[RMDB]
RNA sequence: GGGAACGACUCGAGUAGAGUCGAAAACCGUAGGUGACCUGUUUCCUUGGAUUUACAUGGGAAUAUACAUUCGAAAGAGUGUAUUAGUACCAUGUUGUCAGGAAACGGUCACCUAAACGGAAAUCCUGUUAACUAGCUUCGGCUAGUUAACAGGAAACCUUAGUACACAGUUCGCUGUGUACUAAGGAAAAGAAACAACAACAACAAC
Reactivity to 2A3 in 0.01 (KOAc 150mM, MgCl2 10mM, bicine 150mM(pH8.5), 24C), signal-to-noise 3, nucleotides 027 to 156: c010c010g010u020a010g020g010u010g030a030c050c070u130g040u070u010u020c020c010u100u180g260g010a070u300u300u130a010c000a000u010g000g010g020a010a000u030a000u000a000c000a000u000u000c010g040a090a080a050g010a020g010u000g000u000a000u000u020a010g010u000a000c000c000a000u000g000u000u000g000u010c010a000g000g000a020a000a000c000g000g010u000c000a000c000c000u000a010a000a000c010g030g030a100a110a100u030c000c000u000g000u000u000a010a000c000u000a000g020c000u050u040c260g060g000c000u010a000g000u000u010a000a000c000a000g000g000a000a000a000
Reactivity to DMS in 0.01 (KOAc 150mM, MgCl2 10mM, bicine 150mM(pH8.5), 24C), signal-to-noise 2, nucleotides 027 to 156: c000c000g020u000a030g020g040u000g000a020c010c000u020g060u000u000u000c010c000u000u000g030g010a070u010u000u010a040c010a010u000g010g010g000a260a280u000a030u000a020c000a020u000u000c000g010a230a130a300g010a050g060u010g010u000a000u000u000a050g030u000a160c020c000a000u000g020u000u010g030u000c010a060g010g000a010a010a000c030g010g020u000c000a000c000c000u000a000a020a070c020g020g000a130a080a080u000c000c000u000g010u000u000a000a000c010u000a000g020c000u000u010c300g040g000c000u000a000g010u000u000a000a000c010a000g000g000a000a000a060